[RMDB]
RNA sequence: GGGAACGACUCGAGUAGAGUCGAAAACGCUUAAAGACACUCACCACCCGCAAAAAUAUCCCCGGGCUAGUCUUUUGUGGGGUUUUGAGCGUCGGAUGGAGCAGGGACUGGAGAUGGUUUGUCACCCUGACACUAAUACUUUCGAGUAUUAGUGUCAAAAAGAAACAACAACAACAAC
Reactivity to 2A3 in 0.01 (KOAc 150mM, MgCl2 10mM, bicine 150mM(pH8.5), 24C), signal-to-noise 6, nucleotides 027 to 126: c020g000c000u040u060a070a070a000g080a020c030a030c060u020c010a030c020c010a040c000c020c000g020c030a030a030a010a040a050u110a070u110c020c010c010c000g030g030g000c020u040a040g040u080c060u050u070u040u060g040u050g000g020g000g000u050u020u050u050g020a010g010c000g010u010c020g040g010a060u090g040g000a040g030c040a030g030g000g030a020c020u040g010g010a050g030a070u090g060g060u060u100u100g050u050c020a060c000c010c020
Reactivity to DMS in 0.01 (KOAc 150mM, MgCl2 10mM, bicine 150mM(pH8.5), 24C), signal-to-noise 7, nucleotides 027 to 126: c080g000c050u000u010a050a080a120g000a060c030a060c030u000c020a040c090c120a140c020c010c010g010c040a010a030a030a060a100u010a060u010c020c020c020c050g000g000g020c070u010a070g000u010c040u000u000u000u010g020u000g020g010g010g000u000u000u000u000g000a050g010c040g020u010c030g020g010a090u010g000g000a060g000c030a060g010g010g000a070c050u000g010g010a060g000a070u010g000g010u000u010u010g000u000c060a070c020c010c080